[RMDB]
RNA sequence: GGGAACGACUCGAGUAGAGUCGAAAAGACACGACGGAGACGUCGUGUCAAAGAGUGGGAAACCACUCAAAGAGCCACAGCUUCGGCUGUGGCUCAAGGCGCGGCAUCGUCCGCGGAACAAACGUAAAAUAUGAUGACGUUUCGACGUCAUCAUAUUAAAAGAAACAACAACAACAAC
Reactivity to 2A3 in 0.01 (KOAc 150mM, MgCl2 10mM, bicine 150mM(pH8.5), 24C), signal-to-noise 1, nucleotides 027 to 126: g010a000c010a010c010g000a000c000g030g000a080g000a040c020g010u000c010g010u000g000u030c000a000a000a000g010a000g000u010g000g000g010a030a070a090c000c010a000c000u000c000a030a050a000g020a000g010c020c020a000c010a010g010c020u110u120c260g160g000c000u030g000u000g020g000c000u000c000a000a000g010g020c010g000c000g000g020c050a180u110c120g140u080c010c010g000c000g000g010a000a020c060a030a040a000c070g080u140a240a010
Reactivity to DMS in 0.01 (KOAc 150mM, MgCl2 10mM, bicine 150mM(pH8.5), 24C), signal-to-noise 2, nucleotides 027 to 126: g000a010c010a000c010g020a000c000g010g000a300g000a210c000g010u000c000g000u000g010u000c010a020a050a120g000a000g020u010g010g000g010a090a060a240c000c010a000c010u000c000a040a150a100g000a020g010c010c000a040c010a000g000c000u020u010c220g020g040c000u000g000u000g000g000c010u030c000a010a080g010g000c010g030c010g010g000c000a150u000c080g000u000c010c010g010c000g000g000a030a120c130a020a010a010c080g000u010a040a050